Record summary:
Source: RMDB library OK2TST, as collected in RNAgym. The record gives the reactivity of an RNA of 177 nucleotides to 2A3 and DMS. The reactions ran in a buffer of 150 mM KOAc, 10 mM MgCl2 and 150 mM bicine (pH 8.5), at 24 C. High DMS reactivity at an A or C suggests that its Watson-Crick edge is free.
RNA sequence: GGGAACGACUCGAGUAGAGUCGAAAAUGAUAGUCGUUACGAACAAAUUGGCUGGAUACCUGAAAAAAGCAUCAUUGGUCGUGCUUUUCGUAUCUUGUAAUGCAUUUACUAGUGAUCUUGGGGUGAACUCGUACGUACCAUUCGUGGUACGUACGAGAAAAGAAACAACAACAACAAC
Reactivity to 2A3 in 0.01 (KOAc 150mM, MgCl2 10mM, bicine 150mM(pH8.5), 24C), signal-to-noise 2, nucleotides 027 to 126: u080g040a010u040a000g040u020c040g040u040u110a060c070g030a130a020c060a050a150a130u140u090g020g000c040u010g040g010a050u130a100c010c040u090g220a010a070a010a000a030a020g020c010a000u010c000a040u020u150g100g020u120c010g000u010g010c000u030u080u070u050c040g020u040a060u120c040u060u220g020u040a050a060u070g000c030a020u100u100u050a040c010u040a020g030u000g040a000u010c030u060u070g000g000g000g000u080g030a040a020
Reactivity to DMS in 0.01 (KOAc 150mM, MgCl2 10mM, bicine 150mM(pH8.5), 24C), signal-to-noise 2, nucleotides 027 to 126: u000g000a150u010a080g010u000c010g030u000u020a050c100g000a050a140c200a050a070a050u000u000g010g010c020u010g000g000a110u000a060c010c060u000g000a000a040a070a040a030a030g000c040a000u000c040a170u000u000g000g010u000c300g000u000g000c000u010u010u000u000c070g010u010a050u010c160u000u020g000u010a030a080u010g020c060a050u000u000u050a060c050u000a020g000u000g000a010u000c020u000u010g000g000g020g000u000g000a070a130